Conditions: 150 mM KOAc, 10 mM MgCl2 and 150 mM bicine (pH 8.5), 24 C.
Chemical mapping of a 207-nucleotide RNA with DMS and 2A3.
DMS (dimethyl sulfate) methylates the pairing face of unpaired adenines and cytosines.

RNA sequence: GGGAACGACUCGAGUAGAGUCGAAAAACGAUAACGAGGCGCUCGCUAUUGCUGCGUAACUGACGGCCUGACGGUCUGACGUUACAAAGCUAAAGAGCGGUUGGACCCCACCGGGCAACAGAAGGGGAAAGGCGACCCCGUUUCGACGGGGUCGCAACAUUAUGCCUGUGUUCGCACAGGCAUAAUGAAAAGAAACAACAACAACAAC
Reactivity to DMS in 0.01 (KOAc 150mM, MgCl2 10mM, bicine 150mM(pH8.5), 24C), signal-to-noise 1, nucleotides 027 to 156: a020c040g010a130u020a070a160c000g060a130g020g020c070g000c000u010c000g050c100u000a040u010u000g010c000u000g000c300g000u020a020a030c010u010g040a300c300g010g000c020c030u040g010a120c240g040g040u000c010u000g020a300c260g000u030u000a020c030a070a300a040g000c040u000a100a190a110g010a010g040c030g010g040u000u010g000g000a070c000c010c000c000a130c080c070g000g010g030c060a050a100c070a070g040a080a110g000g000g030g000a020a040a130g030g000c040g000a080c010c010c000c010g070u000u000u000c150g030a090c020g020g030g090g060u000c010g000c000a000a030
Reactivity to 2A3 in 0.01 (KOAc 150mM, MgCl2 10mM, bicine 150mM(pH8.5), 24C), signal-to-noise 2, nucleotides 027 to 156: a020c050g020a100u120a180a010c050g040a030g120g000c070g000c010u010c020g090c090u150a090u160u160g000c020u020g000c010g020u010a010a000c000u000g000a010c000g000g000c000c020u160g200a060c100g010g010u010c030u020g030a010c010g000u000u000a000c000a020a010a000g000c010u010a000a040a000g020a000g000c000g000g010u000u020g080g050a000c000c040c000c010a010c020c050g090g090g000c040a160a000c010a110g070a090a040g020g000g000g020a040a080a030g130g020c000g010a010c000c000c000c000g010u040u040u020c170g050a070c000g000g000g000g010u000c000g030c000a010a000
2A3 adducts were read by reverse transcription with SuperScript II with manganese.
It was measured as part of the RMDB library M2RFPK.
For 2A3, 1,177 sequencing reads were counted.